[RMDB]
RNA sequence: GGGAACGACUCGAGUAGAGUCGAAAACAAAUCCCUGCUCAGUGUGUCCGUGACCCUGUGGGAUUUUGUUUGUCAAAUACCCCCUGUAAUGUCUGUCAAUAUUGGAUUGGAUAUGGGUGCAAUUGUGGAGCACAACUCUUCGGAGUUGUGAAAAGAAACAACAACAACAAC
Reactivity to DMS in 0.01 (KOAc 150mM, MgCl2 10mM, bicine 150mM(pH8.5), 24C), signal-to-noise 9, nucleotides 027 to 129: c020a030a050a040u000c000c010c000u040g000c150u030c030a030g000u030g030u080g020u030c030c200g050u010g000a030c030c050c000u010g010u050g030g000g000a040u000u000u000u000g010u000u000u000g020u030c140a100a110a070u060a140c040c000c000c020c040u000g000u000a050a030u040g010u020c030u020g020u000c050a090a100u020a100u030u040g000g000a030u000u010g010g010a070u020a020u040g010g010g030u020g020c090a090a120u000u010g000u030g000g000a100g010
Reactivity to 2A3 in 0.01 (KOAc 150mM, MgCl2 10mM, bicine 150mM(pH8.5), 24C), signal-to-noise 9, nucleotides 027 to 129: c010a000a000a000u010c000c000c010u020g040c100u060c030a040g010u030g010u030g030u170c050c130g170u190g040a020c010c000c000u010g000u070g010g010g010a020u020u010u020u110g040u010u020u080g110u070c040a000a030a070u170a090c010c010c000c000c010u030g060u090a090a070u080g020u040c030u010g040u010c040a050a060u060a130u200u170g110g020a060u080u140g020g010a010u020a050u090g050g010g000u070g010c020a040a110u070u070g060u080g050g030a040g050